RNA sequence: GGGAACGACUCGAGUAGAGUCGAAAAUUUGCUGGCUGUUCUAUUCGUCAUGUUUCUGAGCUUGAUCGGGUUGCUAGCCAUUGCAGGCAUUAGACUCCAUCGUGCAGCCAUCUACACCGCAGAGAUCCGUAGCUGAAUCAUUCGUGAUUCAGCUACGAAAAGAAACAACAACAACAAC
Reactivity to 2A3 in 0.01 (KOAc 150mM, MgCl2 10mM, bicine 150mM(pH8.5), 24C), signal-to-noise 5, nucleotides 027 to 126: u090u050u130g040c020u010g010g000c010u020g040u050u040c040u100a100u090u100c050g060u050c080a090u090g060u020u090u020c090u100g060a050g030c010u070u060g040a060u190c060g010g030g050u070u080g080c060u080a030g000c000c010a040u060u270g060c080a060g030g000c020a050u080u050a040g020a040c010u000c030c020a060u040c030g030u040g020c000a000g020c010c000a010u020c000u010a040c030a020c050c020g010c060a010g010a000g010a130u040c050
Reactivity to DMS in 0.01 (KOAc 150mM, MgCl2 10mM, bicine 150mM(pH8.5), 24C), signal-to-noise 2, nucleotides 027 to 126: u040u000u000g000c080u000g010g010c020u010g030u020u000c080u030a080u010u000c110g000u000c090a080u010g000u010u010u030c010u000g010a140g000c060u000u010g010a080u020c130g020g000g000u040u000g040c100u000a090g010c000c030a050u020u050g000c090a120g010g030c030a070u000u000a060g000a100c020u000c020c080a010u010c020g010u010g010c060a000g020c020c030a020u000c030u000a080c040a110c060c020g000c050a120g000a040g000a060u010c070